[RMDB]
The record gives the reactivity of an RNA of 177 nucleotides to 2A3 and DMS.
Values cover nucleotides 27 to 126.
2A3 adducts were read by reverse transcription with SuperScript II with manganese.
RNA sequence: GGGAACGACUCGAGUAGAGUCGAAAAAGAUCACGCCGUCGUUGGUGCUCCACACCGUCUGAUAGAACUUGUGUUCGUCGGUGUUGCCGGCUAGUUCGGCGGUGGCGGCCAGGGCGAGCUUGGGCGCAUGUAUCGCCCGAUUCGUCGGGCGAUACAUAAAAGAAACAACAACAACAAC
Reactivity to 2A3 in 0.01 (KOAc 150mM, MgCl2 10mM, bicine 150mM(pH8.5), 24C), signal-to-noise 8, nucleotides 027 to 126: a000g070a060u110c030a020c080g010c000c000g020u030c020g040u040u050g080g020u100g090c020u020c030c010a030c010a000c010c010g030u070c070u110g080a140u110a180g030a030a040c040u170u280g090u120g020u300u060c020g010u000c000g000g020u110g080u100u180g050c040c020g010g010c010u020a040g150u050u040c000g000g000c020g010g010u010g010g000c040g010g000c000c010a020g020g000g010c050g020a050g040c000u050u040g010g010g010c070g000c050
Reactivity to DMS in 0.01 (KOAc 150mM, MgCl2 10mM, bicine 150mM(pH8.5), 24C), signal-to-noise 4, nucleotides 027 to 126: a070g010a080u020c040a120c090g010c010c020g020u010c010g000u020u000g000g000u020g020c050u020c090c080a140c020a060c030c010g000u020c030u040g050a080u020a110g010a020a020c030u040u050g010u050g000u000u000c020g000u010c010g000g000u000g020u020u020g000c040c080g010g000c020u020a110g010u020u000c020g000g030c000g000g010u010g000g010c130g000g010c020c020a030g000g010g020c080g000a060g000c040u010u010g010g000g010c040g000c130
The DMS profile rests on 12,416 reads. For 2A3, 7,136 sequencing reads were counted. The reactions ran in a buffer of 150 mM KOAc, 10 mM MgCl2 and 150 mM bicine (pH 8.5), at 24 C.